[RMDB]
RNA sequence: GGGAACGACUCGAGUAGAGUCGAAAAUGUUAACAGGAAGGCUGGUCCGCCACUUAGUUUUGCCAUUGUCAUUUGGAAUGUUACAGAAUUGCUCCUGUUCUAAGUAUGCUCACAAGCCAGAAACAGCUAGCUAAUAAAGGUUCGCCUUUAUUAGCUAAAAAGAAACAACAACAACAAC
Reactivity to 2A3 in 0.01 (KOAc 150mM, MgCl2 10mM, bicine 150mM(pH8.5), 24C), signal-to-noise 6, nucleotides 027 to 126: u090g010u050u080a050a030c020a040g030g090a100a020g060g000c020u040g020g050u040c030c020g010c020c010a020c020u040u070a030g090u020u060u110u110g030c020c010a040u030u060g150u130c060a140u050u040u090g030g050a100a050u090g030u080u060a030c020a030g060a100a120u100u090g020c020u040c020c010u020g010u010u010c000u000a020a010g030u020a040u110g020c000u010c030a060c020a070a020g010c010c020a040g060a080a130a040c010a010g040c050
Reactivity to DMS in 0.01 (KOAc 150mM, MgCl2 10mM, bicine 150mM(pH8.5), 24C), signal-to-noise 9, nucleotides 027 to 126: u010g010u000u000a050a080c090a080g000g010a110a090g010g020c040u000g000g010u000c060c070g010c040c100a070c070u000u000a060g010u000u000u000u000g020c060c020a060u000u000g010u010c090a100u000u000u010g010g010a090a060u000g010u010u010a070c050a060g000a070a070u000u000g010c100u000c030c010u000g010u000u000c040u000a040a070g020u000a060u000g010c030u000c080a060c110a050a090g000c020c050a080g010a100a070a070c120a060g010c140